[RMDB]
RNA sequence: GGGAACGACUCGAGUAGAGUCGAAAAGAAAGAAAGAAGAAGAAGAAAAAGAGGUCAAACGUCAGAAUAUCGGGCGUAAAUGCGACAGUAUGCAGAAAGCCGACCUCAAUGUCGUAAAGAAAGAAAACCAUACCACGGCUUUCGAGCCGUGGUAUGGAAAAGAAACAACAACAACAAC
Reactivity to 2A3 in 0.01 (KOAc 150mM, MgCl2 10mM, bicine 150mM(pH8.5), 24C), signal-to-noise 2, nucleotides 027 to 126: g170a020a020a000g010a020a020a000g040a000a000g030a000a000g000a000a050g000a070a000a000a000a040g020a020g060g150u000c010a140a000a000c030g000u010c000a000g050a250a130u190a060u300c020g000g010g000c000g010u000a020a020a020u090g000c030g020a070c010a050g120u220a050u270g020c140a030g080a040a150a000g010c100c120g000a070c020c000u010c060a000a000u030g000u030c080g020u010a040a050a000g090a090a100a000g100a040a050a050a000
Reactivity to DMS in 0.01 (KOAc 150mM, MgCl2 10mM, bicine 150mM(pH8.5), 24C), signal-to-noise 1, nucleotides 027 to 126: g020a000a090a040g000a000a040a130g050a060a010g000a050a130g030a140a090g000a030a020a040a040a060g000a020g000g000u000c000a080a090a030c000g000u010c000a030g000a060a070u040a100u030c000g030g000g000c000g000u000a090a110a100u000g040c030g000a030c000a020g110u000a010u060g010c050a060g000a080a130a070g000c030c220g000a030c040c000u000c020a060a030u000g050u090c010g000u190a010a100a170g000a000a100a100g000a090a060a090a290
The record gives the reactivity of an RNA of 177 nucleotides to 2A3 and DMS. The reactions ran in a buffer of 150 mM KOAc, 10 mM MgCl2 and 150 mM bicine (pH 8.5), at 24 C. High 2A3 reactivity points to a flexible backbone, as in loops and unpaired stretches. For DMS the reverse transcriptase was MarathonRT. The 2A3 profile rests on 852 reads. Reactivities are given for positions 27 through 126.